[RMDB]
RNA sequence: GGGAACGACUCGAGUAGAGUCGAAAACUGCAGCUGCCCACAUAUCGGUAUAAUCAGCCAUAGGAGAACUAGGUGUAAUAGGAUAAAUUCCAGCAACUUCAGUAAAAGCAUACGCAGCGUAUGCAGCAAAUGCACUCCACUUCGGUGGAGUGCAUUUAAAAGAAACAACAACAACAAC
Reactivity to DMS in 0.01 (KOAc 150mM, MgCl2 10mM, bicine 150mM(pH8.5), 24C), signal-to-noise 1, nucleotides 027 to 126: c040u000g000c030a060g000c010u000g020c000c060c100a100c120a180u050a080u050c130g050g120u060a080u000a090a060u040c100a070g000c040c000a130u000a040g000g050a110g000a040a060c070u000a150g000g000u000g000u020a100a100u040a100g020g030a000u000a110a060a090u050u050c000c000a150g000c040a060a000c050u010u060c030a000g000u000a060a100a230a160g000c020a040u000a010c000g000c130a150g000c190g020u000a040u000g000c020a060g000c110
Reactivity to 2A3 in 0.01 (KOAc 150mM, MgCl2 10mM, bicine 150mM(pH8.5), 24C), signal-to-noise 1, nucleotides 027 to 126: c000u010g000c010a000g000c000u000g000c000c000c000a050c080a070u160a000u060c170g000g010u130a130u000a060a070u140c050a010g040c010c000a130u080a030g150g000a120g050a060a030c010u010a110g010g010u040g020u160a130a110u070a000g050g050a000u050a020a230a070u120u000c010c000a000g060c010a010a000c000u060u090c000a010g020u090a000a210a150a010g030c000a000u000a000c000g040c210a300g030c070g000u030a040u000g020c020a020g090c010